[RMDB]
RNA sequence: GGGAACGACUCGAGUAGAGUCGAAAAACAAGAGAGAAUACCUUUCCACCUUCAGAUUGAGAGACAGGUUAUACAUGCAGAGAUCCAACAUCUGGGACAUUGGAUGGAUGCCACUUUCAACCUCAAACCACUAAAUAGGUUUCGACCUAUUUAGUGGAAAAGAAACAACAACAACAAC
Reactivity to 2A3 in 0.01 (KOAc 150mM, MgCl2 10mM, bicine 150mM(pH8.5), 24C), signal-to-noise 5, nucleotides 027 to 126: a000c130a070a040g080a000g010a010g050a170a090u130a220c010c000u030u040u010c020c030a060c020c010u080u120c030a050g000a260u050u040g020a030g000a000g020a100c070a140g040g000u070u090a050u040a070c050a010u070g120c010a010g040a010g020a300u000c010c010a020a050c020a180u100c090u160g090g050g000a020c040a080u080u060g060g030a000u020g000g010a020u030g010c020c010a040c040u080u100u060c030a040a040c000c020u060c050a070a060a090
Reactivity to DMS in 0.01 (KOAc 150mM, MgCl2 10mM, bicine 150mM(pH8.5), 24C), signal-to-noise 3, nucleotides 027 to 126: a100c140a060a070g000a070g000a070g010a160a110u010a090c070c020u000u020u010c010c030a120c070c060u000u000c090a060g000a080u010u000g000a070g000a030g000a070c160a070g030g010u010u000a050u020a070c070a050u000g040c020a030g010a170g000a080u010c020c040a050a120c150a080u010c100u000g010g010g000a040c080a120u020u010g000g020a030u000g010g010a110u000g020c030c050a060c030u010u000u000c020a030a090c030c020u000c120a050a110a210
This 177-nucleotide RNA was probed chemically with 2A3 and DMS. In probing experiments dimethyl sulfate is read out at A N1 and C N3, which are open when not base-paired. Conditions: 150 mM KOAc, 10 mM MgCl2 and 150 mM bicine (pH 8.5), 24 C. For 2A3 the reverse transcriptase was SuperScript II with manganese. High 2A3 reactivity points to a flexible backbone, as in loops and unpaired stretches.